[RMDB]
RNA sequence: GGGAACGACUCGAGUAGAGUCGAAAACGGAUGGGCCGCUUCCGGCGAACGAGCCCGAAGAGCGAGUGGGGGAGAACUCCCGAGAGUUGGGAGACAGAAAGAGGGCGAGUGAUCUCGGAAGGAAUCCUCAGUUAUACAUCUUCGGAUGUAUAACUGAAAAAGAAACAACAACAACAAC
Reactivity to 2A3 in 0.01 (KOAc 150mM, MgCl2 10mM, bicine 150mM(pH8.5), 24C), signal-to-noise 2, nucleotides 027 to 126: c020g010g030a050u070g030g080g060c020c010g080c040u020u030c010c020g010g000c030g000a000a010c010g000a010g040c000c000c000g020a100a010g020a000g060c070g020a040g070u160g000g000g030g000g000a090g020a030a040c010u010c000c030c000g120a120g000a000g140u210u250g000g000g000a010g000a000c020a010g100a030a110a000g080a090g030g020g000c000g000a010g030u030g020a050u000c070u030c020g020g000a000a010g020g030a050a020u010c000c020
Reactivity to DMS in 0.01 (KOAc 150mM, MgCl2 10mM, bicine 150mM(pH8.5), 24C), signal-to-noise 3, nucleotides 027 to 126: c070g040g010a110u000g020g020g010c050c020g040c030u010u000c020c080g030g010c080g000a100a050c050g010a300g000c020c010c010g000a100a080g020a090g000c020g010a070g030u000g020g010g010g010g010a150g020a110a150c010u010c000c000c000g000a150g010a120g030u010u010g010g000g000a050g000a080c150a090g010a030a050a090g010a170g000g000g020c050g010a160g010u000g000a130u000c030u010c030g010g010a040a040g030g010a070a120u000c030c050
Source: RMDB library 15KREP, as collected in RNAgym. An RNA of 177 nucleotides, treated with 2A3 and DMS and read out base by base. Conditions: 150 mM KOAc, 10 mM MgCl2 and 150 mM bicine (pH 8.5), 24 C. For DMS the reverse transcriptase was MarathonRT.